RNA sequence: GGGAACGACUCGAGUAGAGUCGAAAACUCACGCCAGGCAACCGGCGUCGCGGUGUCCGGUGUACCGGGGUCCAGCGGAUCGAGCAAUUGCAGGAUCGUGUCAUCGUCGACCCCAGCGAACCACUCCCUAAUAGGCGCAUUUCGAUGCGCCUAUUAGAAAAGAAACAACAACAACAAC
Reactivity to DMS in 0.01 (KOAc 150mM, MgCl2 10mM, bicine 150mM(pH8.5), 24C), signal-to-noise 3, nucleotides 027 to 126: c040u010c050a080c040g000c030c060a030g010g000c080a110a170c040c030g030g010c100g020u010c100g000c060g020g030u000g040u010c040c060g040g000u000g010u020a100c080c060g040g000g030g010u000c010c070a110g010c020g010g000a010u010c050g000a300g030c080a280a070u010u000g010c070a110g010g000a050u000c020g020u000g020u020c090a150u010c120g000u030c110g010a080c020c030c010c000a060g020c000g010a060a100c080c050a130c090u010c060c030
Reactivity to 2A3 in 0.01 (KOAc 150mM, MgCl2 10mM, bicine 150mM(pH8.5), 24C), signal-to-noise 2, nucleotides 027 to 126: c010u010c020a000c010g040c010c010a030g030g040c040a190a250c050c000g060g040c020g130u090c090g050c000g050g000u020g010u030c020c000g000g020u010g000u060a110c070c060g000g000g000g000u030c020c000a030g120c060g040g020a040u030c030g050a040g030c030a130a300u230u260g060c050a040g000g120a020u020c050g050u090g060u130c000a140u110c020g070u040c040g010a000c040c000c000c010a000g040c020g010a010a020c050c000a040c110u010c020c020
Source information: Source: RMDB library OK2TST, as collected in RNAgym. Structure probing data (DMS and 2A3) for a 177-nucleotide construct. 2A3 adducts were read by reverse transcription with SuperScript II with manganese. The RNA was probed in 150 mM KOAc, 10 mM MgCl2 and 150 mM bicine (pH 8.5) at 24 C.